[RMDB]
RNA sequence: GGGAACGACUCGAGUAGAGUCGAAAAGAUAUGGACGUGAGGGAGCUUCUUUCGGAAACGAAAGAAAGCGUUGAUCUACGUCCUAAGUCAAAAGCUCCUCAACGUGCUUCGGCACGUUGAGGAGCAAGUAUAAGUGGUUGUUCGCAACCACUUAUACAAAAGAAACAACAACAACAAC
Reactivity to 2A3 in 0.01 (KOAc 150mM, MgCl2 10mM, bicine 150mM(pH8.5), 24C), signal-to-noise 2, nucleotides 027 to 126: g030a010u060a030u100g000g010a000c030g040u240g300a050g020g010g000a020g000c000u010u010c010u000u010u000c000g010g000a080a040a030c030g010a010a000a010g060a040a100a030g020c020g020u110u010g000a010u000c000u010a000c000g000u000c000c000u000a090a010g050u010c000a050a040a080a090g040c000u020c000c010u030c000a020a000c010g030u010g030c010u130u150c300g140g000c000a010c070g000u010u030g000a010g040g000a000g010c000a000a000
Reactivity to DMS in 0.01 (KOAc 150mM, MgCl2 10mM, bicine 150mM(pH8.5), 24C), signal-to-noise 2, nucleotides 027 to 126: g000a020u000a300u010g000g000a000c000g010u000g000a030g000g000g000a030g020c010u000u000c000u000u000u000c000g010g010a100a090a220c000g010a010a000a000g010a010a030a040g020c010g010u010u010g010a030u010c010u000a040c000g010u000c000c000u000a020a030g010u000c010a080a090a100a120g000c010u000c000c010u000c000a000a010c000g000u000g000c000u000u030c230g030g000c000a000c000g030u000u000g010a010g020g000a010g000c000a010a010